This 207-nucleotide RNA was probed chemically with 2A3.
Reactivities are given for positions 27 through 156.
The RNA was probed in 150 mM KOAc, 10 mM MgCl2 and 150 mM bicine (pH 8.5) at 24 C.

[RMDB]
RNA sequence: GGGAACGACUCGAGUAGAGUCGAAAAUGAGUCCAGGAGGUUGAGGCUACGGUGAGCUGUGAUAGGGCCAUGACACUCCAGCCUGGGCGACAGAGUGAGACCUGUCUCAAAAAUAAUACUAAUAAAGAUUAUUUCAUGCUGGAUAUAUGUGUGGCUAGCCUAUAAAUGCUUUCGAGCAUUUAUAGGCAAAAGAAACAACAACAACAAC
Reactivity to 2A3 in 0.01 (KOAc 150mM, MgCl2 10mM, bicine 150mM(pH8.5), 24C), signal-to-noise 2, nucleotides 027 to 156: u090g000a020g030u010c070c060a010g010g040a060g040g030u050u050g070a040g020g030c040u050a050c050g050g010u030g030a030g020c010u030g040u070g050a100u090a170g060g000g000c000c000a010u070g070a020c000a000c040u010c000c000a010g000c000c000u080g020g050g010c070g000a010c000a000g040a000g030u100g000a060g030a070c000c000u000g040u000c030u000c070a150a240a000a000a020u040a020a030u050a180c020u140a100a220u220a300a300a000g030a030u020u040a010u000u010u050c010a010u020g020c010u020g030g000a030u050a010u040a040u160g020u010g010u000g070g000c050u140a070